Chemical mapping of a 177-nucleotide RNA with DMS and 2A3.
RNA sequence: GGGAACGACUCGAGUAGAGUCGAAAAGGGGUUGAACUAUUGGAAAUAACACCCAAGUUGCUUAGGUGCCAGGACUAACUUCUUGUUUACCAAGGUUUCAACGCAGACUUGAAAGACCUGCUUAGGCGUGUGUUAAGCGUUUCGACGCUUAACACACAAAAGAAACAACAACAACAAC
Reactivity to DMS in 0.01 (KOAc 150mM, MgCl2 10mM, bicine 150mM(pH8.5), 24C), signal-to-noise 1, nucleotides 027 to 126: g020g030g000g000u000u000g020a060a100c020u000a100u020u000g000g000a090a050a140u000a090a090c090a050c110c100c010a040a040g000u020u000g000c240u000u000a050g020g000u000g000c020c000a080g010g030a150c030u000a030a040c050u000u000c030u000u010g030u000u000u000a120c010c050a060a040g010g060u000u000u000c010a030a070c050g010c090a020g000a080c120u010u000g000a060a150a120g000a130c060c000u000g000c060u010u000a050g020g020c120
Reactivity to 2A3 in 0.01 (KOAc 150mM, MgCl2 10mM, bicine 150mM(pH8.5), 24C), signal-to-noise 1, nucleotides 027 to 126: g020g000g000g010u010u020g030a010a020c020u040a190u280u110g030g080a000a080a100u170a080a130c030a050c010c040c000a000a010g100u130u100g040c060u030u010a010g030g010u010g040c010c020a040g020g050a010c000u040a020a040c000u040u050c000u100u090g060u040u080u080a100c000c010a020a020g060g000u010u100u230c020a020a010c020g000c090a010g040a100c030u030u000g020a030a010a010g010a010c010c010u030g000c030u060u080a060g090g000c060
For DMS the reverse transcriptase was MarathonRT. The reactions ran in a buffer of 150 mM KOAc, 10 mM MgCl2 and 150 mM bicine (pH 8.5), at 24 C.